[RMDB]
RNA sequence: GGGAACGACUCGAGUAGAGUCGAAAAGGCAACCAUGGGGCCGUAAAGCACUGGACGCGGCAAAGGAGCUUGAUCGCCCGAUCCUGCUCUCCAUCGGCUAUGCGACAUGUCACUGGUGCCAUGUCAACCCCUAAUGCGGAUUCGUCCGCAUUAGGGGAAAAGAAACAACAACAACAAC
Reactivity to DMS in 0.01 (KOAc 150mM, MgCl2 10mM, bicine 150mM(pH8.5), 24C), signal-to-noise 2, nucleotides 027 to 126: g050g000c050a060a090c060c010a050u000g000g000g050g020c020c020g000u020a060a160a120g020c010a070c060u030g000g030a130c300g000c050g020g020c090a030a110a100g020g000a070g000c010u000u000g030a050u010c080g040c090c180c140g030a070u000c070c010u000g010c020u000c090u010c020c060a030u000c110g000g010c030u000a090u020g030c050g010a160c030a040u000g010u000c050a080c090u010g020g010u000g010c000c010a050u010g020u000c100a170a270
Reactivity to 2A3 in 0.01 (KOAc 150mM, MgCl2 10mM, bicine 150mM(pH8.5), 24C), signal-to-noise 2, nucleotides 027 to 126: g020g010c030a100a080c000c030a020u090g050g000g040g000c000c010g000u000a040a080a000g010c000a000c180u040g040g010a110c040g020c030g000g000c000a080a070a160g080g020a050g010c000u020u020g000a000u040c020g090c100c190c040g040a000u030c000c020u020g020c000u000c000u020c040c040a110u110c080g090g050c030u060a070u180g040c000g000a010c010a040u110g010u040c010a010c100u070g050g020u020g030c040c000a000u040g080u030c010a050a090